[RMDB]
Structure probing data (2A3) for a 207-nucleotide construct.
For 2A3, 941 sequencing reads were counted.
The reactions ran in a buffer of 150 mM KOAc, 10 mM MgCl2 and 150 mM bicine (pH 8.5), at 24 C.
RNA sequence: GGGAACGACUCGAGUAGAGUCGAAAAGCUCUGUGCUGACUGGUGACAUUGGUGUAGCACUGCCGCCUUGCUCUCUCACAUACUUGAGCAAGGAGGGACUAUGAUUACACAACCUUCUGCCUACAAUGGGGCCUCAGUAAACCUGCUGAUGGAAAAACGUCACCUAGUAUUUCGAUACUAGGUGACGAAAAGAAACAACAACAACAAC
Reactivity to 2A3 in 0.01 (KOAc 150mM, MgCl2 10mM, bicine 150mM(pH8.5), 24C), signal-to-noise 2, nucleotides 027 to 156: g040c040u010c010u020g060u030g000c040u020g060a040c040u010g000g000u010g020a010c000a040u070u100g130g010u020g050u010a010g000c000a010c020u020g020c030c010g040c000c000u000u000g040c000u020c000u020c000u140c070a090c040a210u200a300c190u080u050g000a010g000c000a000a000g000g000a000g060g000g000a010c030u040a030u160g050a050u050u110a000c050a000c000a020a110c010c000u060u020c020u060g030c000c000u020a110c010a060a110u130g000g000g010g040c000c010u020c000a010g010u050a100a110a090c020c060u030g000c010u020g020a070u130g010g090a060a080a000a000a000